[RMDB]
RNA sequence: GGGAACGACUCGAGUAGAGUCGAAAAACACUAGCCUUGCGCUAGAUUUUUAACUUAACAAAACGGACUUAAAUACCUACAGCUGGUCCUCAUAGGUGUUCCAUUGCAGUGCACUUUAGUGCCCUGGUCGUACGCAGCAAUUCGUUGCUGCGUACGAAAAAGAAACAACAACAACAAC
Reactivity to 2A3 in 0.01 (KOAc 150mM, MgCl2 10mM, bicine 150mM(pH8.5), 24C), signal-to-noise 3, nucleotides 027 to 126: a000c130a040c000u000a000g000c000c020u110u300g030c120g000c030u010a010g000a030u010u010u010u000u040a080a070c040u090u080a120a000c020a050a100a010a030c050g030g040a020c030u090u250a010a110a130u100a140c030c030u100a060c020a020g020c040u080g030g010u020c000c030u010c040a110u100a020g020g000u010g060u010u000c010c020a060u040u300g020c010a000g010u020g020c000a010c020u150u210u170a050g010u000g010c030c000c000u020g010g000
Reactivity to DMS in 0.01 (KOAc 150mM, MgCl2 10mM, bicine 150mM(pH8.5), 24C), signal-to-noise 2, nucleotides 027 to 126: a080c250a060c000u000a010g000c030c000u000u010g070c090g020c000u000a070g000a070u000u010u000u000u000a160a100c060u000u010a090a060c090a100a100a100a100c190g020g010a010c060u000u010a160a050a090u040a070c090c050u000a110c200a100g010c140u020g000g000u050c010c050u010c110a110u000a070g020g030u000g010u000u000c080c000a080u010u110g000c020a030g040u000g020c000a030c010u000u020u030a160g020u000g000c030c020c000u000g000g000
Chemical mapping of a 177-nucleotide RNA with 2A3 and DMS. Source: RMDB libraries RFM100 and RFMREP, as collected in RNAgym. For 2A3 the reverse transcriptase was SuperScript II with manganese. High 2A3 reactivity points to a flexible backbone, as in loops and unpaired stretches. The reactions ran in a buffer of 150 mM KOAc, 10 mM MgCl2 and 150 mM bicine (pH 8.5), at 24 C. For DMS the reverse transcriptase was MarathonRT.